An RNA of 207 nucleotides, treated with 2A3 and read out base by base. For 2A3, 1,086 sequencing reads were counted. The RNA was probed in 150 mM KOAc, 10 mM MgCl2 and 150 mM bicine (pH 8.5) at 24 C.

[RMDB]
RNA sequence: GGGAACGACUCGAGUAGAGUCGAAAAGACAGGGGAGCAUUACUCACUGUCAGUUUAUAGUUACUGCUGUGGAGGAAGCUCCUAUGAACUUGCAGCUUUGCACCUGUGAGGGCAACGGGGCUCACGUUGCAGCGCUGGGCAAUUUACAUAUUGCUUCCUACAGCUGAACGUUCGCGUUCAGCUGUAGAAAAGAAACAACAACAACAAC
Reactivity to 2A3 in 0.01 (KOAc 150mM, MgCl2 10mM, bicine 150mM(pH8.5), 24C), signal-to-noise 2, nucleotides 027 to 156: g050a020c070a090g040g090g000g000a000g070c020a070u040u300a030c010u020c050a030c000u030g080u270c030a000g000u020u040u070a300u050a080g110u110u090a020c030u000g050c000u010g030u090g080g080a060g040g020a070a010g000c000u000c000c000u000a020u040g010a010a070c020u010u090g000c010a020g000c030u080u100u070g030c000a050c020c070u070g030u000g010a010g010g070g080c040a130a110c060g020g000g000g060c000u000c040a020c010g020u040u040g000c000a000g000c010g000c070u010g000g030g020c010a030a040u060u120u110a100c040a020u200a030u100u010g030c000u070u000c010